RNA sequence: GGGAACGACUCGAGUAGAGUCGAAAACCUCACUACAUUUUACUGUUCCUAAAGAAUUUGUGACAGGUACCGUAAAACGUAUUGCAAGGUUUAUCAGUUCCUAUAAACAGGUAAAUAACAAUAUAUGAAAAGCAAAGACUGUUCGCAGUCUUUGCAAGUACGGUCCACAGUUCGCUGUGGACCGUACAAAAGAAACAACAACAACAAC
Reactivity to 2A3 in 0.01 (KOAc 150mM, MgCl2 10mM, bicine 150mM(pH8.5), 24C), signal-to-noise 1, nucleotides 027 to 156: c000c000u000c000a020c000u000a020c010a030u000u000u000u000a000c000u000g000u100u130c000c000u090a140a180a060g100a150a240u150u170u240g170u060g060a020c050a100g000g000u000a000c020c000g000u030a000a000a000a000c000g000u000a000u020u020g030c050a060a000g010g020u030u000u010a140u180c060a010g000u010u000c010c000u070a100u150a140a120a000c050a010g060g080u130a130a100a040u170a020a030c020a080a000u230a000u130a060u210g050a090a060a000a040g000c000a000a000a000g000a010c000u000g010u000u090c190g000c030a000g050u000c000u000u030u000g030c000a000a000
Structure probing data (2A3) for a 207-nucleotide construct. 2A3 adducts were read by reverse transcription with SuperScript II with manganese. The reactions ran in a buffer of 150 mM KOAc, 10 mM MgCl2 and 150 mM bicine (pH 8.5), at 24 C. The 2A3 profile rests on 362 reads. Source: RMDB library M2RFOK, as collected in RNAgym.